[RMDB]
RNA sequence: GGGAACGACUCGAGUAGAGUCGAAAAAGGUGAUUUCUCCUGCACCUUUAUCAAUGGAGGAACUCGACUUUGCUGUGGGUCCCAAAGGGACCUUAGGUGCAGACAGUAACCGGCGGUGAAGUGUGAGCAUAGGUUCGUGUCUUCGGACACGAACCAACAAGGCUAAUGAGUUCGCUCAUUAGCCUUGAAAAGAAACAACAACAACAAC
Reactivity to 2A3 in 0.01 (KOAc 150mM, MgCl2 10mM, bicine 150mM(pH8.5), 24C), signal-to-noise 5, nucleotides 027 to 156: a000g030g000u010g010a020u020u040u040c000u020c010c010u160g070c020a020c010c020u070u210u170a040u040c060a030a040u300g010g000a010g010g010a020a020c020u010c010g030a010c010u000u030u030g000c000u010g010u100g030g010g000u000c000c000c020a150a140a080g000g000g000a010c050c000u020u090a030g000g000u030g010c010a040g110a300c030a020g000u020a090a040c010c010g030g010c010g000g010u030g020a020a010g040u100g070u110g090a010g050c070a110u100a180g000g000u000u000c000g000u000g000u000c000u020u060c190g030g000a000c000a000c000g010a000a000c000c000a000a000
Reactivity to DMS in 0.01 (KOAc 150mM, MgCl2 10mM, bicine 150mM(pH8.5), 24C), signal-to-noise 3, nucleotides 027 to 156: a010g020g010u000g020a300u000u000u000c000u020c030c010u000g020c020a050c010c010u000u000u030a070u010c170a060a090u010g010g010a130g030g030a080a070c050u000c000g020a050c020u000u000u010g000c050u010g000u000g020g010g000u010c010c010c010a080a080a220g080g020g020a030c000c010u000u010a010g050g040u010g030c020a150g020a120c100a100g050u010a100a050c030c020g000g020c050g010g000u000g010a070a050g020u000g020u010g000a060g000c050a090u000a120g040g050u000u000c000g040u000g010u000c000u000u000c300g040g010a020c000a010c000g000a000a010c010c010a020a080
This 207-nucleotide RNA was probed chemically with 2A3 and DMS. 2A3 adducts were read by reverse transcription with SuperScript II with manganese. It was measured as part of the RMDB library M2RFPK. DMS adducts were read by reverse transcription with MarathonRT. The reactions ran in a buffer of 150 mM KOAc, 10 mM MgCl2 and 150 mM bicine (pH 8.5), at 24 C. 2A3 is a SHAPE reagent: it acylates the 2'-hydroxyl of flexible nucleotides of all four kinds. For 2A3, 4,493 sequencing reads were counted.